Source information
An RNA of 177 nucleotides, treated with DMS and 2A3 and read out base by base.
RNA sequence: GGGAACGACUCGAGUAGAGUCGAAAAACUGCCUGUUUCGACAGGCAGUAGUCUACUUCGCGCAACCGCCGAGUCGUUCCCGCGGUUGCGUGAAGUAGAUUGAUAUGAUCUUAUUCGUAAGAUCAAAGUAUUGUUGAACUUUCGAGUUCAACAAUACAAAAGAAACAACAACAACAAC
Reactivity to DMS in 0.01 (KOAc 150mM, MgCl2 10mM, bicine 150mM(pH8.5), 24C), signal-to-noise 3, nucleotides 027 to 126: a060c000u000g010c000c000u000g010u010u010u010c160g010a080c010a010g010g010c000a000g000u000a010g000u000c000u000a000c000u000u000c000g020c000g000c010a010a010c010c010g000c030c230g010a110g010u000c000g000u010u000c000c000c000g020c010g000g010u000u000g010c000g030u000g000a020a010g010u000a000g000a000u000u000g010a120u010a100u010g010a020u000c000u000u000a030u000u010c180g030u000a000a010g000a010u000c000a050a090a150
Reactivity to 2A3 in 0.01 (KOAc 150mM, MgCl2 10mM, bicine 150mM(pH8.5), 24C), signal-to-noise 2, nucleotides 027 to 126: a010c010u010g000c000c000u000g040u010u080u080c200g090a000c000a010g000g000c000a000g000u000a000g000u010c000u000a000c000u000u000c000g000c010g000c030a000a000c010c010g010c040c200g110a050g000u000c000g020u010u000c010c000c000g010c000g000g010u020u000g000c000g000u000g000a000a000g010u010a000g000a000u000u030g000a000u030a060u120g010a010u000c010u010u030a030u040u090c200g060u030a010a010g000a010u010c010a000a100a020